[RMDB]
Chemical mapping of a 207-nucleotide RNA with 2A3.
The data come from the RNA Mapping Database (RMDB), library OK3TST.
The 2A3 profile rests on 582 reads.
RNA sequence: GGGAACGACUCGAGUAGAGUCGAAAAAGCAAAACGAAAACUUUCAUCGCUCCCUCGGUGAAUUCGUUACACGUGUGCGCAUUGCAUCAACGACGGCCGUUCGAUGUAACCGGCUGCCAGGCAGCGACGCGUUCCGCAGUCGUCUCGCAACGCUGCCCGAUAAGGACGCUUUCGAGCGUCCUUAUCGAAAAGAAACAACAACAACAAC
Reactivity to 2A3 in 0.01 (KOAc 150mM, MgCl2 10mM, bicine 150mM(pH8.5), 24C), signal-to-noise 1, nucleotides 027 to 156: a010g130c120a070a070a010a010c020g070a000a050a040a220c080u080u040u040c050a040u000c020g020c000u100c010c000c000u050c020g000g000u010g000a040a090u060u080c020g000u030u100a010c040a020c130g130u070g050u110g050c040g020c090a090u010u170g000c000a000u050c060a090a010c020g150a070c050g140g090c180c050g000u030u060c020g040a040u040g000u030a000a050c110c040g130g030c020u010g050c040c050a070g020g000c010a010g030c020g080a100c050g030c060g040u140u020c010c050g100c080a050g100u140c020g050u060c030u000c060g040c040a020a130c020g000c000u000g000c070c030
Reactivities are rounded to 0.1 and cut off at 0 and 3.